Structure probing data (DMS and 2A3) for a 177-nucleotide construct.
Reactivities are given for positions 27 through 126.
Source: RMDB library OK1LIB, as collected in RNAgym.
The reactions ran in a buffer of 150 mM KOAc, 10 mM MgCl2 and 150 mM bicine (pH 8.5), at 24 C.

RNA sequence: GGGAACGACUCGAGUAGAGUCGAAAAGCUAGCCAGCGCACGAUGAGACUGCCGUGACGUCUAGCCUGCGUCUCAACUAGUCUCAAUCAAUCAAAACGCUGGGAUUGAUGUACGAGACUAGUACACAGUGUAAGCACUUCUUCGGAGGUGUUUACACAAAAGAAACAACAACAACAAC
Reactivity to DMS in 0.01 (KOAc 150mM, MgCl2 10mM, bicine 150mM(pH8.5), 24C), signal-to-noise 9, nucleotides 027 to 126: g000c020u010a090g000c080c030a040g010c040g010c040a040c060g010a080u020g000a100g010a070c080u010g020c070c040g010u000g000a080c050g010u020c020u010a070g010c010c020u010g010c040g010u000c010u000c020a120a050c010u010a000g000u000c000u000c000a020a040u000c010a020a010u000c010a060a070a100a130c120g010c080u010g010g010g000a030u000u000g000a010u000g000u020a080c200g010a020g010a010c010u000a010g010u000a070c180a080c210a130
Reactivity to 2A3 in 0.01 (KOAc 150mM, MgCl2 10mM, bicine 150mM(pH8.5), 24C), signal-to-noise 9, nucleotides 027 to 126: g020c020u020a010g020c010c030a030g010c020g010c030a010c030g050a050u140g030a040g070a110c070u100g060c050c010g030u030g050a140c020g020u060c020u020a010g010c000c000u040g020c020g060u000c000u000c020a020a020c000u010a000g000u000c000u000c000a000a020u010c000a000a010u000c010a010a040a050a090c110g030c110u120g050g020g000a000u000u010g000a000u010g020u070a040c080g000a010g010a010c000u000a000g010u040a010c090a010c020a030